[RMDB]
RNA sequence: GGGAACGACUCGAGUAGAGUCGAAAAGGAGCUUGAUUCGUCAAGCUCCAAAAGUUACAGACCCGAUUCCUAGGGUAAACAAGAAGCUAUGCACCGUGGCAAAAAGGAAUGGAUUCGUCCAUUCCAAGUUACUGGUUAGGUUCGCCUAACCAGUAACAAAAGAAACAACAACAACAAC
Reactivity to DMS in 0.01 (KOAc 150mM, MgCl2 10mM, bicine 150mM(pH8.5), 24C), signal-to-noise 3, nucleotides 027 to 126: g010g000a010g010c000u000u000g000a010u000u020c200g010u020c000a000a000g010c010u000c010c010a000a000a060a130g020u010u010a080c190a190g010a050c010c010c000g000a180u000u000c020c010u000a150g000g010g000u000a050a050a030c120a110a070g010a070a080g010c030u010a050u000g020c080a050c090c110g010u000g010g010c120a050a050a060a090a090g000g000a000a000u000g000g000a040u000u010c190g000u000c000c000a040u000u000c000c000a060a070
Reactivity to 2A3 in 0.01 (KOAc 150mM, MgCl2 10mM, bicine 150mM(pH8.5), 24C), signal-to-noise 1, nucleotides 027 to 126: g000g010a000g000c010u010u000g000a000u020u030c030g030u010c070a010a010g010c000u000c000c010a000a010a000a000g010u030u040a090c060a070g140a090c000c000c030g000a030u040u070c000c010u010a020g000g020g000u050a040a090a020c030a030a020g180a110a010g030c030u060a040u120g060c070a070c060c100g060u030g030g000c010a030a010a020a050a090g020g000a010a010u000g000g030a010u070u020c160g010u030c060c000a000u000u000c000c000a000a010
Structure probing data (DMS and 2A3) for a 177-nucleotide construct. For 2A3, 2,651 sequencing reads were counted. The DMS profile rests on 2,138 reads. Values cover nucleotides 27 to 126. The reactions ran in a buffer of 150 mM KOAc, 10 mM MgCl2 and 150 mM bicine (pH 8.5), at 24 C.